[RMDB]
RNA sequence: GGGAACGACUCGAGUAGAGUCGAAAAGAUAUGGAGUUUAGCCACAUGUAUGAAGAAACGAUAAGCUCCAUUCGGAAACGAAUGUGAGCUUUUGACGUUUCCAUACAUGUGGCUAAACUCCUAAGUCCUAUUUAACAAUGUUCGCAUUGUUAAAUAGAAAAGAAACAACAACAACAAC
Reactivity to DMS in 0.01 (KOAc 150mM, MgCl2 10mM, bicine 150mM(pH8.5), 24C), signal-to-noise 4, nucleotides 027 to 126: g000a100u000a300u010g010g010a010g030u000u000u000a010g020c010c000a010c000a010u000g000u000a000u010g010a280a140g010a010a010a020c010g010a180u000a020a010g010c000u000c000c010a010u000u010c000g010g000a150a120a220c010g010a010a000u000g020u010g010a010g010c000u000u000u000u000g010a210c060g000u000u000u010c000c000a010u000a000c000a000u000g020u000g000g000c000u000a000a000a000c000u000c000c000u000a000a080g010u010c030